An RNA of 177 nucleotides, treated with 2A3 and DMS and read out base by base. For 2A3, 2,743 sequencing reads were counted. For DMS the reverse transcriptase was MarathonRT. In probing experiments dimethyl sulfate is read out at A N1 and C N3, which are open when not base-paired.
RNA sequence: GGGAACGACUCGAGUAGAGUCGAAAAGACUUGGAAGGCUAUUGCGGUGAAACGGCAUCGGCUUUGAUCCAGCUGGCCGGUUUCAUACUGGAUCGCGAUGCCGCGCAGGCCCAUGCUGAAACCGCUAGCUAUCGAGUAUGUUCGCAUACUCGAUAGCAAAAGAAACAACAACAACAAC
Reactivity to 2A3 in 0.01 (KOAc 150mM, MgCl2 10mM, bicine 150mM(pH8.5), 24C), signal-to-noise 2, nucleotides 027 to 126: g010a030c040u080u080g050g060a080a030g120g000c000u070a130u260u170g020c000g030g050u130g140a150a070a010c080g000g010c000a000u000c000g120g030c060u180u080u180g000a000u010c000c020a000g010c030u040g030g030c040c070g060g000u050u110u020c030a020u050a130c000u010g000g020a010u010c020g000c000g000a010u020g000c000c060g020c000g010c030a010g030g000c000c000c000a020u100g000c010u030g030a060a060a020c000c010g020c070u030a020
Reactivity to DMS in 0.01 (KOAc 150mM, MgCl2 10mM, bicine 150mM(pH8.5), 24C), signal-to-noise 3, nucleotides 027 to 126: g000a090c060u010u000g020g020a140a130g010g020c030u000a070u010u020g020c040g010g020u000g010a100a140a290c010g000g000c000a010u000c060g020g020c170u010u010u000g020a000u000c010c030a000g010c300u000g000g010c100c080g010g010u000u000u000c070a060u010a120c020u000g010g000a020u000c000g020c010g010a030u000g010c010c010g020c060g030c080a070g010g020c020c030c030a070u010g020c030u000g020a110a140a070c010c010g020c130u000a110